[RMDB]
RNA sequence: GGGAACGACUCGAGUAGAGUCGAAAAGAUAUGGACGUGAUCGACAUGCACGACAUUCGGAAACGAAUGAAGUGCAACAGCGAUUCACGUCCUAAGUCAAACAGUUCACCCUUCGGGGUGAACUGAAGUAGUUACCAAGCUUCGGCUUGGUAACUACAAAAGAAACAACAACAACAAC
Reactivity to DMS in 0.01 (KOAc 150mM, MgCl2 10mM, bicine 150mM(pH8.5), 24C), signal-to-noise 2, nucleotides 027 to 126: g020a030u010a160u000g000g030a020c000g070u000g000a040u010c010g000a050c140a300u000g040c010a000c010g000a300c000a010u010u010c000g000g010a080a050a100c020g010a020a000u010g000a050a300g010u000g000c000a080a020c270a100g000c020g000a010u000u000c000a000c000g000u000c000c000u000a000a030g000u000c020a170a200a300c000a020g000u010u000c010a000c010c000c000u000u000c290g000g060g000g030u000g010a000a010c000u020g000a010a090
Reactivity to 2A3 in 0.01 (KOAc 150mM, MgCl2 10mM, bicine 150mM(pH8.5), 24C), signal-to-noise 2, nucleotides 027 to 126: g000a020u030a010u060g000g000a000c000g010u010g000a000u020c020g050a050c170a290u300g000c000a020c020g010a000c000a000u010u030c020g020g010a030a010a010c020g010a030a020u000g000a040a010g000u000g000c040a050a020c060a030g000c000g010a020u210u140c010a000c020g020u000c010c000u010a010a010g010u010c000a090a070a120c000a010g020u020u010c010a010c000c000c040u060u130c300g160g000g000g010u010g000a000a000c000u010g000a050a030
Annotation:
Structure probing data (DMS and 2A3) for a 177-nucleotide construct. The data come from the RNA Mapping Database (RMDB), library TTRDES. The reactions ran in a buffer of 150 mM KOAc, 10 mM MgCl2 and 150 mM bicine (pH 8.5), at 24 C. For 2A3, 3,624 sequencing reads were counted. DMS adducts were read by reverse transcription with MarathonRT. 2A3 adducts were read by reverse transcription with SuperScript II with manganese.